[RMDB]
RNA sequence: GGGAACGACUCGAGUAGAGUCGAAAAGAUCUUUAGGUUGCGGCGGUAAAUGACCAACGUUGCCGGUUUCGGCCUUAUAAGCAUCGGCUAUACUUUUUACAUAUUCACGAAAUCUAGCAAUAAUCGCCAAGUCAUCAUCGGAUUGAAUAUUGCCUGCGAGUGAAUAGGUCUUCGGACCUAUUCACUCAAAAGAAACAACAACAACAAC
Reactivity to 2A3 in 0.01 (KOAc 150mM, MgCl2 10mM, bicine 150mM(pH8.5), 24C), signal-to-noise 2, nucleotides 027 to 156: g030a050u090c020u000u130u150a030g010g060u010u030g030c050g050g000c000g010g080u070a010a120a070u140g050a080c020c060a020a120c070g050u040u000g010c010c020g000g060u070u050u110c080g010g010c020c000u210u110a160u060a100a050g060c060a020u050c030g000g000c050u030a010u020a110c040u080u050u050u170u300a060c050a030u080a090u160u180c120a100c090g060a010a000a060u080c090u090a060g000c030a000a080u100a100a000u080c060g000c020c030a060a000g120u050c040a050u030c000a030u100c140g050g000a060u110u040g030a080a010u090a040u090u070g000c000c000u000g000c040